[RMDB]
RNA sequence: GGGAACGACUCGAGUAGAGUCGAAAAGCCAUCGCUUUCGAGCGAUGGCAUUGCCCAAAGAGGACCUGGGGGUGUCUGGGCUGCUAAACUCAUCAGCCGUACUACCGCUAAAUUUCGAUUUAGCGAAGCACUUCACCAUAUUCGUAUGGUGAAGUGCAAAAGAAACAACAACAACAAC
Reactivity to DMS in 0.01 (KOAc 150mM, MgCl2 10mM, bicine 150mM(pH8.5), 24C), signal-to-noise 2, nucleotides 027 to 126: g000c000c010a010u000c000g000c000u000u010u000c170g000a010g030c000g020a010u000g000g030c000a010u000u000g010c000c000c000a070a120a170g000a130g020g060a060c060c050u010g020g000g000g010g020u010g000u000c010u010g020g000g010c030u000g010c120u010a050a080a120c120u000c110a080u000c040a030g020c000c010g020u010a080c120u000a100c110c050g000c010u000a000a020a040u010u000u010c130g030a030u020u000u000a010g030c020g010a100a090